[RMDB]
RNA sequence: GGGAACGACUCGAGUAGAGUCGAAAAUUAUGACAUCGAACUUGUCACAGGAAAGCAAAAUAUUCUCCUGCGCAAGUAUGGCCGUGGUGGUUAUCACUACACCCCAUUCCACUAUGAGCGAGACAACGGACCUGAUUCUUCGGAAUCAGGAAAAGAAACAACAACAACAAC
Reactivity to 2A3 in 0.01 (KOAc 150mM, MgCl2 10mM, bicine 150mM(pH8.5), 24C), signal-to-noise 9, nucleotides 027 to 129: u130u060a100u130g090a010c030a060u080c060g050a040a050c000u020u020g070u130c040a000c010a070g020g020a070a030a040g090c170a120a070a150a070u260a160u100u060c060u010c000c000u010g000c010g000c010a000a020g020u030a080u070g100g000c020c010g010u020g010g010u030g000g050u070u060a080u210c040a010c110u100a040c040a090c020c010c000c000a030u060u010c010c010a010c030u030a020u070g060a070g040c020g010a020g020a040c050a080a020c050g060g010a010
Reactivity to DMS in 0.01 (KOAc 150mM, MgCl2 10mM, bicine 150mM(pH8.5), 24C), signal-to-noise 9, nucleotides 027 to 129: u020u030a090u000g010a060c120a020u030c120g000a140a050c040u000u000g000u080c040a070c030a000g000g000a020a060a090g040c290a150a080a100a130u090a050u010u010c140u020c070c010u030g030c120g000c020a000a000g030u000a050u040g040g000c060c050g000u020g010g050u020g030g000u020u040a100u050c060a060c120u010a080c080a150c060c020c000c040a100u070u020c000c000a050c060u030a030u030g030a080g040c030g040a090g000a050c100a030a050c100g040g020a150
The data come from the RNA Mapping Database (RMDB), library 15KLIB. Structure probing data (2A3 and DMS) for a 170-nucleotide construct. 2A3 adducts were read by reverse transcription with SuperScript II with manganese. For DMS the reverse transcriptase was MarathonRT. The RNA was probed in 150 mM KOAc, 10 mM MgCl2 and 150 mM bicine (pH 8.5) at 24 C.